[RMDB]
RNA sequence: GGGAACGACUCGAGUAGAGUCGAAAAGAAAAAGGUAGGAGAAUAAACUCUCUCUCGAAUCCUACCUAAGCGCGAAAGCGCGAAAAUCGAUGCUGACGAGAGAGAGGAAGAAAGCAUCGAAAAGAAAGGGUAAUACAAUGUUCGCAUUGUAUUACCCAAAAGAAACAACAACAACAAC
Reactivity to 2A3 in 0.01 (KOAc 150mM, MgCl2 10mM, bicine 150mM(pH8.5), 24C), signal-to-noise 3, nucleotides 027 to 126: g080a030a080a030a000a040g040g000u000a000g030g030a000g050a130a160u170a180a240a140c010u010c000u020c000u000c000u000c000g020a100a080u010c000c000u010a010c000c000u030a060a080g000c000g010c010g010a140a080a040g000c020g010c010g000a010a070a000a000u020c000g000a000u010g000c010u010g020a040c020g000a010g010a000g020a000g010a010g030g020a060a030g090a030a070a000g000c000a000u000c020g040a000a030a060a060g190a040a070a050
Reactivity to DMS in 0.01 (KOAc 150mM, MgCl2 10mM, bicine 150mM(pH8.5), 24C), signal-to-noise 2, nucleotides 027 to 126: g000a040a000a090a110a030g020g000u000a000g030g000a080g040a220a080u040a070a120a230c020u010c000u000c000u000c000u000c000g020a150a160u010c010c000u000a000c000c000u000a050a010g000c000g000c020g000a110a070a120g000c000g000c020g000a050a020a100a150u010c000g000a000u010g010c000u000g000a140c010g030a000g000a000g040a010g000a000g110g050a010a070g000a060a090a000g010c000a000u010c030g000a050a100a040a200g020a030a130a060